Source information
The data come from the RNA Mapping Database (RMDB), library OK1LIB. Chemical mapping of a 177-nucleotide RNA with 2A3 and DMS. 2A3 adducts were read by reverse transcription with SuperScript II with manganese. For 2A3, 9,382 sequencing reads were counted. The DMS profile rests on 8,559 reads. Conditions: 150 mM KOAc, 10 mM MgCl2 and 150 mM bicine (pH 8.5), 24 C.
RNA sequence: GGGAACGACUCGAGUAGAGUCGAAAACGACCGGUCCGCGCUAGUUCCGCGUCGACGGCGGGGGUCGUCGGGGUCCGUGGGUCUCGCCCCCUCCCCAUCGAGAGUCCGUAGGUGACCUACCGUGCUAAUGUGUAAUGAACUUCGGUUCAUUACACAUAAAAGAAACAACAACAACAAC
Reactivity to 2A3 in 0.01 (KOAc 150mM, MgCl2 10mM, bicine 150mM(pH8.5), 24C), signal-to-noise 8, nucleotides 027 to 126: c030g030a020c020c040g050g040u040c010c010g090c020g000c070u030a040g070u120u030c040c010g050c050g080u070c060g030a040c010g020g010c010g010g010g000g000g030u030c030g030u030c030g010g000g010g090u020c030c020g020u110g020g000g020u020c040u030c060g040c010c000c000c000c010u050c010c010c000c000a070u140c090g090a120g010a010g180u010c010c010g030u080a070g010g150u100g020a030c000c000u060a190c040c000g020u040g050c020u120a140
Reactivity to DMS in 0.01 (KOAc 150mM, MgCl2 10mM, bicine 150mM(pH8.5), 24C), signal-to-noise 3, nucleotides 027 to 126: c050g020a030c060c020g030g020u000c020c030g000c050g000c050u020a050g000u020u000c070c060g000c050g000u000c120g010a020c050g010g000c070g000g010g000g010g000u000c040g030u010c020g020g000g010g000u000c020c040g000u010g010g000g010u020c050u010c070g000c010c010c000c000c050u030c090c000c010c020a030u010c070g010a100g020a090g000u010c040c040g000u030a090g000g020u020g000a030c030c010u020a110c050c000g010u020g010c080u000a090